Structure probing data (2A3 and DMS) for a 177-nucleotide construct. The reactions ran in a buffer of 150 mM KOAc, 10 mM MgCl2 and 150 mM bicine (pH 8.5), at 24 C. For DMS, 4,836 sequencing reads were counted. DMS adducts were read by reverse transcription with MarathonRT. It was measured as part of the RMDB library 15KREP.

RNA sequence: GGGAACGACUCGAGUAGAGUCGAAAAACUUUUGCAAGAUAGGUAAGGAACAGAAGUGUUGCAUGUGCAAUAGACGCGCUGCAGCGUACUCUUCACCUCUGCAAUCUUAUGCCUGCUGGACUCAUUCGUUCUAUUAAGACUUCGGUCUUAAUAGAACAAAAGAAACAACAACAACAAC
Reactivity to 2A3 in 0.01 (KOAc 150mM, MgCl2 10mM, bicine 150mM(pH8.5), 24C), signal-to-noise 6, nucleotides 027 to 126: a000c040u100u050u080u100g030c040a110a070g020a180u120a060g050g000u070a090a050g040g020a100a080c040a070g110a180a020g060u040g020u120u010g000c010a030u230g010u010g000c020a000a070u060a190g080a070c050g010c010g030c080u140g010c030a030g000c010g010u060a140c010u010c000u030u010c020a010c010c000u000c000u000g000c010a010a020u000c010u040u080a040u080g040c010c010u020g020c030u040g030g040a040c020u030c080a050u130u060c040
Reactivity to DMS in 0.01 (KOAc 150mM, MgCl2 10mM, bicine 150mM(pH8.5), 24C), signal-to-noise 5, nucleotides 027 to 126: a070c070u000u000u010u000g010c080a080a040g010a080u010a060g000g020u010a050a070g000g000a080a110c120a050g010a090a050g020u010g010u000u000g000c010a010u010g030u010g010c130a060a130u000a070g000a090c130g010c000g010c090u000g010c120a070g000c020g010u000a080c060u000c050u000u000c040a040c020c010u000c020u000g000c020a030a020u010c060u000u000a060u000g000c020c010u000g020c060u000g000g010a160c110u000c060a100u010u010c140